[RMDB]
RNA sequence: GGGAACGACUCGAGUAGAGUCGAAAACAUACUCCAUCGUUCUGAACUUCUCGCUUUUUUGAUGCAAGAACAAACAAGUAUUUUAGUUUCAGGGAGUCAUGGCAAAACGACAGUAUCUUCGUUAAUCCAUAGACCGUGUCUUCGGACACGGUCUAUGAAAAGAAACAACAACAACAAC
Reactivity to DMS in 0.01 (KOAc 150mM, MgCl2 10mM, bicine 150mM(pH8.5), 24C), signal-to-noise 2, nucleotides 027 to 126: c050a100u000a020c010u020c030c050a150u000c190g040u000u010c030u000g000a070a070c040u000u000c130u000c120g020c000u000u000u000u000u000u000g020a110u010g000c170a090a090g000a080a070c050a020a020a030c080a060a030g010u000a040u010u000u000u010a060g020u010u000u000c030a070g000g010g000a070g010u000c100a010u000g000g000c150a060a020a040a020c060g000a010c220a080g020u010a090u000c060u000u010c040g020u000u000a090a170u010c080
Reactivity to 2A3 in 0.01 (KOAc 150mM, MgCl2 10mM, bicine 150mM(pH8.5), 24C), signal-to-noise 2, nucleotides 027 to 126: c000a030u050a010c010u000c010c000a100u100c110g130u170u020c000u000g020a060a040c040u010u000c030u050c040g040c010u090u120u000u030u120u170g070a060u130g090c060a050a040g060a160a060c000a010a020a000c020a030a050g010u050a190u050u170u110u090a030g040u050u030u080c030a010g000g000g070a010g010u040c030a010u030g070g000c030a000a040a000a110c030g030a020c020a040g080u070a090u040c050u050u030c000g060u020u050a040a020u110c060